[RMDB]
RNA sequence: GGGAACGACUCGAGUAGAGUCGAAAACGGAGACUGUUCGCAGUCUCCGAAAGGAGCGCGCUUUUGCGCUAAGGCCAUACGGACACCCGGCUCCAAAGCCGAAAAUCCGGCGGUUCGCCGCCGGAAACCUAACUUUCAAGUUCGCUUGAAAGUUAGGAAAAGAAACAACAACAACAAC
Reactivity to DMS in 0.01 (KOAc 150mM, MgCl2 10mM, bicine 150mM(pH8.5), 24C), signal-to-noise 2, nucleotides 027 to 126: c020g000g010a010g000a010c000u000g010u020u020c180g030c000a000g030u000c000u000c010c000g020a020a030a100g020g020a040g020c010g010c010g050c190u000u000u020u010g020c000g000c000u010a060a080g010g010c020c060a080u000a110c080g000g000a070c060a090c040c020c020g000g000c080u000c050c050a090a130a120g000c020c010g000a070a090a100a070u000c000c010g000g010c000g010g000u000u010c200g010c000c000g030c000c000g010g000a010a020a070
Reactivity to 2A3 in 0.01 (KOAc 150mM, MgCl2 10mM, bicine 150mM(pH8.5), 24C), signal-to-noise 3, nucleotides 027 to 126: c010g000g010a000g000a000c010u010g040u100u110c250g010c130a000g000u000c000u010c000c000g020a010a010a010g050g020a020g010c010g000c020g020c030u150u160u300u300g000c000g000c030u030a030a040g040g010c010c010a080u100a110c080g020g020a020c010a080c030c020c020g020g010c020u040c020c040a070a070a020g000c000c040g080a060a030a010a090u030c010c010g000g030c010g040g040u020u040c220g010c040c020g000c000c000g000g020a010a000a000
An RNA of 177 nucleotides, treated with DMS and 2A3 and read out base by base. Conditions: 150 mM KOAc, 10 mM MgCl2 and 150 mM bicine (pH 8.5), 24 C. Values cover nucleotides 27 to 126. The data come from the RNA Mapping Database (RMDB), library M2PK50.